An RNA of 177 nucleotides, treated with DMS and read out base by base.
The DMS profile rests on 811 reads.
DMS adducts were read by reverse transcription with MarathonRT.

[RMDB]
RNA sequence: GGGAACGACUCGAGUAGAGUCGAAAACUUGGCAUCACUCUUGCAUUGCAUCUUGCAAAGAUGAAUAUGAAAAAGAUCUGGUUAAUAUCACACUAAUGGAUUGGAUCCCUGAAGGACCAGAUGUGGAAAAAGACCUAGCUUUCGAGCUAGGUCUUUUAAAAGAAACAACAACAACAAC
Reactivity to DMS in 0.01 (KOAc 150mM, MgCl2 10mM, bicine 150mM(pH8.5), 24C), signal-to-noise 1, nucleotides 027 to 126: c030u000u000g000g010c080a050u010c060a090c100u000c060u000u000g010c020a040u000u000g010c080a000u010c070u000u000g010c150a060a090a010g010a070u000g010a170a140u000a080u010g050a060a100a080a100a060g000a060u000c010u010g000g020u000u000a050a110u000a110u000c080a040c080a140c170u020a040a120u010g000g000a090u000u010g000g000a300u030c000c000c040u000g010a170a140g000g000a060c010c030a040g020a040u010g030u000g010g010a040